[RMDB]
This 177-nucleotide RNA was probed chemically with DMS and 2A3. The DMS profile rests on 1,992 reads.
RNA sequence: GGGAACGACUCGAGUAGAGUCGAAAAGAUAUGGACGCUCACAUGGAGCUAGGGUUCGGAAACGAACCCUUAGCUAUGAAGUGUAGCGUCCUAAGUCAAAAGCAUGCUCAGUUCGCUGAGCAUGCAAGCAAGAUACCUUGUUCGCAAGGUAUCUUGCAAAAGAAACAACAACAACAAC
Reactivity to DMS in 0.01 (KOAc 150mM, MgCl2 10mM, bicine 150mM(pH8.5), 24C), signal-to-noise 2, nucleotides 027 to 126: g000a010u000a080u020g000g000a010c000g010c000u000c120a030c040a100u010g020g000a000g030c010u000a040g000g000g030u000u000c010g020g000a020a010a040c000g000a000a000c010c010c000u000u000a010g000c000u000a300u010g000a100a140g040u000g010u000a000g020c000g000u000c010c000u010a000a080g000u000c020a120a150a130a210g000c000a000u000g020c000u000c000a010g020u000u010c300g010c000u000g010a000g000c030a000u010g010c020a020a040
Reactivity to 2A3 in 0.01 (KOAc 150mM, MgCl2 10mM, bicine 150mM(pH8.5), 24C), signal-to-noise 2, nucleotides 027 to 126: g000a010u030a000u070g020g000a000c010g020c000u060c020a100c050a070u170g140g050a020g000c000u000a010g000g010g000u000u000c000g030g000a000a020a020c010g000a000a000c000c020c000u000u080a000g000c000u090a300u300g130a010a000g020u010g040u180a010g030c020g000u010c000c000u000a000a010g000u020c010a000a010a080a060g000c000a010u000g010c000u030c000a000g010u090u110c270g040c200u020g000a000g020c000a000u000g000c000a000a000